[RMDB]
RNA sequence: GGGAACGACUCGAGUAGAGUCGAAAAAGAACACUAAAAAACGCUGUUUUACCUUUGUUGUCGUGAAACUGAGCCUCGUGAUAUCGCCGUCUUAUAUCUCGCACACCCGCAACCAUUGAAACGCCUCUACGCGUAAGCUGUUCGCAGCUUACGCGUAAAAAGAAACAACAACAACAAC
Reactivity to 2A3 in 0.01 (KOAc 150mM, MgCl2 10mM, bicine 150mM(pH8.5), 24C), signal-to-noise 2, nucleotides 027 to 126: a000g110a060a000c040a000c050u260a020a100a100a000a000a100c120g020c050u030g030u000u040u030u050a040c000c000u000u090u020g070u100u060g010u000c020g090u020g140a160a000a000c080u010g000a000g030c000c010u050c080g000u000g000a080u090a040u190c060g020c030c040g070u020c040u020u120a190u000a010u230c020u000c010g000c020a020c000a010c000c000c000g120c000a010a070c040c000a050u000u140g070a000a000a150c030g020c000c000u010c040
Reactivity to DMS in 0.01 (KOAc 150mM, MgCl2 10mM, bicine 150mM(pH8.5), 24C), signal-to-noise 1, nucleotides 027 to 126: a010g000a030a060c080a070c050u050a000a050a090a000a040a050c090g010c100u000g040u000u000u030u000a210c000c020u000u010u000g030u000u020g010u010c040g000u000g070a040a050a090c050u020g010a100g030c060c000u010c020g040u030g000a090u020a080u010c100g000c000c050g000u010c010u000u000a100u000a060u000c020u000c090g000c110a030c120a050c030c040c000g050c110a060a000c090c080a040u020u040g040a010a020a030c050g000c030c040u000c120

Source: RMDB library OK1LIB, as collected in RNAgym. Structure probing data (2A3 and DMS) for a 177-nucleotide construct. 2A3 adducts were read by reverse transcription with SuperScript II with manganese.